[RMDB]
RNA sequence: GGGAACGACUCGAGUAGAGUCGAAAACGCAUAGAUAAUCUGGUCGCACCGCUGCCCCACAAGGGCACCGACAGGCGCAUCACAGAUAUCACCGAAUGACUUCGGAGUGAUCUGGCGCAGUUUCCCGGCUACUCUCUUUGUUCGCAAAGAGAGUAGCAAAAGAAACAACAACAACAAC
Reactivity to 2A3 in 0.01 (KOAc 150mM, MgCl2 10mM, bicine 150mM(pH8.5), 24C), signal-to-noise 1, nucleotides 027 to 126: c050g000c040a130u120a120g040a030u050a070a060u070c020u010g050g030u050c010g030c000a050c050c020g000c060u010g000c000c000c000c010a130c030a040a030g000g010g000c020a000c000c000g000a020c040a070g080g000c000g040c030a000u110c070a050c000a000g010a000u050a040u090c020a020c000c000g040a020a040u180g260a180c210u010u000c020g020g000a050g050u100g010a000u020c010u030g030g000c020g000c030a010g050u020u020u050c010c000c020g030
Reactivity to DMS in 0.01 (KOAc 150mM, MgCl2 10mM, bicine 150mM(pH8.5), 24C), signal-to-noise 1, nucleotides 027 to 126: c050g000c020a100u010a050g030a030u000a080a030u010c030u000g000g020u000c050g050c040a020c070c030g010c170u000g000c030c010c000c000a070c270a130a300g000g020g000c000a000c120c020g070a190c200a060g000g000c000g010c050a110u000c040a300c010a010g010a020u000a050u010c020a090c000c000g000a020a010u000g000a140c270u000u000c000g000g020a070g000u000g010a050u000c000u000g000g000c000g000c030a040g030u000u000u000c000c000c010g000
This 177-nucleotide RNA was probed chemically with 2A3 and DMS. It was measured as part of the RMDB library RFMREP. For 2A3, 1,094 sequencing reads were counted. The RNA was probed in 150 mM KOAc, 10 mM MgCl2 and 150 mM bicine (pH 8.5) at 24 C. For 2A3 the reverse transcriptase was SuperScript II with manganese.